Overview
The record gives the reactivity of an RNA of 177 nucleotides to DMS and 2A3. For DMS, 821 sequencing reads were counted.
RNA sequence: GGGAACGACUCGAGUAGAGUCGAAAACUAAGGUGACAAGCUGGAGGGCAACAGAGAUGCAAUGAAAGGCCACCUUUCUUUUCAGUUUAAGGACAGGAAAAGUCUUGUCUUAAUACUGACAUUUGAAUCCGAAUCUGUGAUUCGUCACAGAUUCGGAAAAAGAAACAACAACAACAAC
Reactivity to DMS in 0.01 (KOAc 150mM, MgCl2 10mM, bicine 150mM(pH8.5), 24C), signal-to-noise 1, nucleotides 027 to 126: c020u010a070a120g010g000u000g000a080c050a060a240g000c030u000g000g000a250g010g020g060c060a100a000c080a050g010a140g020a140u010g000c040a020a020u010g010a100a210a040g030g000c050c000a090c020c010u010u000u000c050u000u000u000u000c010a000g010u000u000u000a050a100g030g010a020c000a030g000g000a060a130a080a140g010u000c000u000u000g020u000c000u010u000a010a080u000a020c000u000g010a030c300a050u000u000u000g010a090a060
Reactivity to 2A3 in 0.01 (KOAc 150mM, MgCl2 10mM, bicine 150mM(pH8.5), 24C), signal-to-noise 1, nucleotides 027 to 126: c020u000a010a000g050g010u010g000a010c060a080a040g020c030u020g030g010a080g010g020g000c000a100a050c050a110g110a020g020a140u030g000c030a060a220u130g010a140a000a000g040g000c040c000a010c000c000u030u030u010c100u110u090u050u030c000a010g000u010u000u010a090a030g080g010a020c000a010g080g030a030a140a180a040g170u060c010u020u010g010u000c000u020u040a020a020u090a040c010u000g030a030c010a090u090u140u130g150a040a030